Chemical mapping of a 207-nucleotide RNA with 2A3.

[RMDB]
RNA sequence: GGGAACGACUCGAGUAGAGUCGAAAAGAGAGAGACUCUCUCUCUAGAGCUCUAGAGUCCUAGAGCUAGCUAGGACUAGUCAGCUAGGAUCUCCUAGCUCUUCUCGAAGUCCUCUUCCUUCAGUCAGUCGAAGAGUCAGAGCUCUCUCUCUGAGAAGGAUAACAGGUGGGUUCGCCCACCUGUUAUCAAAAGAAACAACAACAACAAC
Reactivity to 2A3 in 0.01 (KOAc 150mM, MgCl2 10mM, bicine 150mM(pH8.5), 24C), signal-to-noise 2, nucleotides 027 to 156: g020a000g000a030g000a020g030a050c010u010c010u000c000u000c000u000c000u100a060g000a000g030c010u060c030u060a020g000a070g150u200c110c000u000a000g000a010g000c020u010a000g080c030u060a050g020g070a080c000u020a000g040u090c080a020g060c030u000a000g040g080a240u040c160u130c160c000u010a020g020c000u010c040u090u050c010u000c050g100a080a030g040u020c030c030u030c020u080u030c050c000u080u050c030a150g070u040c010a030g020u130c050g090a110a040g030a020g030u050c090a000g030a080g070c010u000c000u000c000u030c000u010c020u000g030a090g050a030a010g140

It was measured as part of the RMDB library OK3TST. The RNA was probed in 150 mM KOAc, 10 mM MgCl2 and 150 mM bicine (pH 8.5) at 24 C. The 2A3 profile rests on 875 reads.